RNA sequence: GGGAACGACUCGAGUAGAGUCGAAAAGAUAUGGAUGCGUGUAUGGAGUGGGUCGGAAACGACCCAACUAUGAAGUACCGCAUCCUAAGUCAAAACAGUACCACGUUGUUCGCAACGUGGUACUGAAGCUACCACUAAUGUUCGCAUUAGUGGUAGCAAAAGAAACAACAACAACAAC
Reactivity to 2A3 in 0.01 (KOAc 150mM, MgCl2 10mM, bicine 150mM(pH8.5), 24C), signal-to-noise 3, nucleotides 027 to 126: g030a020u060a010u140g000g000a000u010g010c020g000u260g010u070a010u040g090g040a030g000u030g010g000g000u000c000g030g000a050a040a020c010g010a000c020c020c020a020a000c020u050a160u230g100a100a040g010u000a010c000c000g000c000a000u000c000c000u000a020a000g010u010c040a030a000a070a110c000a000g000u010a000c010c000a000c010g000u000u000g050u060u080c300g030c180a000a000c010g000u000g010g010u000a000c000u000g000a000a000
Reactivity to DMS in 0.01 (KOAc 150mM, MgCl2 10mM, bicine 150mM(pH8.5), 24C), signal-to-noise 2, nucleotides 027 to 126: g000a040u000a300u000g010g000a020u000g010c000g000u000g040u010a000u000g000g010a040g020u000g000g000g010u010c000g000g010a080a070a090c010g020a010c000c020c000a010a000c010u010a240u010g030a110a220g010u000a000c000c000g000c000a010u000c010c000u000a000a040g010u000c000a060a070a160a200c010a000g000u010a000c010c000a000c000g010u000u010g000u000u000c230g010c000a000a010c000g000u000g000g000u000a000c000u000g000a020a070
Structure probing data (2A3 and DMS) for a 177-nucleotide construct. For 2A3, 8,612 sequencing reads were counted. The RNA was probed in 150 mM KOAc, 10 mM MgCl2 and 150 mM bicine (pH 8.5) at 24 C.